The record gives the reactivity of an RNA of 177 nucleotides to DMS and 2A3. For DMS, 9,692 sequencing reads were counted. For 2A3, 11,956 sequencing reads were counted. Source: RMDB library M2PK90, as collected in RNAgym. The reactions ran in a buffer of 150 mM KOAc, 10 mM MgCl2 and 150 mM bicine (pH 8.5), at 24 C.
RNA sequence: GGGAACGACUCGAGUAGAGUCGAAAAUAUUAGGCUGUGAGAGUAUCUCUCUCCCAGCCGGUUCGCGCAGCCAUCUUUUUCGACUUUACUUGGGUUAGCUGCGCGAACUGGCUGGCGUUCCCAGCAACAAUUCUCAAGUAUUCGUACUUGAGAAUUGAAAAGAAACAACAACAACAAC
Reactivity to DMS in 0.01 (KOAc 150mM, MgCl2 10mM, bicine 150mM(pH8.5), 24C), signal-to-noise 5, nucleotides 027 to 126: u010a080u010u010a100g000g000c090u010g010u000g000a020g000a060g010u000a110u010c110u000c010u000c040u010c060c010c000a010g010c010c010g000g000u000u000c010g020c010g010c010a030g010c010c080a040u000c040u010u000u000u000u000c060g010a070c070u000u010u000a040c080u010u010g010g000g010u000u010a030g020c000u000g010c010g020c010g000a010a010c000u000g010g020c010u000g000g000c010g000u000u000c000c000c000a180g010c180a090a150
Reactivity to 2A3 in 0.01 (KOAc 150mM, MgCl2 10mM, bicine 150mM(pH8.5), 24C), signal-to-noise 5, nucleotides 027 to 126: u180a050u130u160a060g080g010c040u030g040u060g090a030g010a020g040u210a300u090c080u000c000u000c010u020c060c030c000a000g000c010c000g000g000u000u000c000g010c010g000c010a000g000c020c020a060u040c090u060u180u060u080u150c060g060a070c060u140u180u190a070c030u090u140g050g010g000u020u020a010g000c000u010g000c000g000c000g000a000a010c000u000g000g000c000u000g000g000c000g000u010u000c000c000c000a000g040c010a010a060